[RMDB]
An RNA of 177 nucleotides, treated with 2A3 and DMS and read out base by base.
RNA sequence: GGGAACGACUCGAGUAGAGUCGAAAAGAUAUGGACCUGCGGGAGCGAUAAGCCAUGGUCGGAAACGACCAGUGGCUUUUGACGCUCAUGCAGGUCCUAAGUCAAAAGCCCGAGUUCGCUCGGGCAAGCUUAUAUGUAACUUCGGUUACAUAUAAGCAAAAGAAACAACAACAACAAC
Reactivity to 2A3 in 0.01 (KOAc 150mM, MgCl2 10mM, bicine 150mM(pH8.5), 24C), signal-to-noise 3, nucleotides 027 to 126: g000a010u030a010u090g010g000a000c000c010u000g000c040g040g080g010a010g010c100g110a140u070a300a010g000c000c000a020u020g020g000u010c000g000g000a060a030a000c010g010a000c010c030a050g180u040g040g010c000u020u000u000u010g020a020c060g000c010u010c010a010u050g000c000a000g000g000u000c000c000u000a000a000g000u000c000a020a020a060a060g000c010c010c010g000a000g000u090u170c230g000c120u000c000g000g010g000c000a000a000
Reactivity to DMS in 0.01 (KOAc 150mM, MgCl2 10mM, bicine 150mM(pH8.5), 24C), signal-to-noise 6, nucleotides 027 to 126: g000a020u000a220u000g000g000a010c000c000u000g010c010g010g010g010a010g030c000g030a140u010a010a020g010c000c000a050u000g000g010u010c000g020g000a060a050a100c010g020a010c000c000a000g030u010g020g010c000u000u000u000u010g010a190c120g010c000u000c010a070u000g010c010a000g010g010u000c000c000u000a000a050g010u000c030a110a110a160a190g010c010c010c000g010a020g010u000u010c260g010c000u000c000g010g000g010c000a000a010
The 2A3 profile rests on 11,999 reads. Conditions: 150 mM KOAc, 10 mM MgCl2 and 150 mM bicine (pH 8.5), 24 C. Reactivities are given for positions 27 through 126.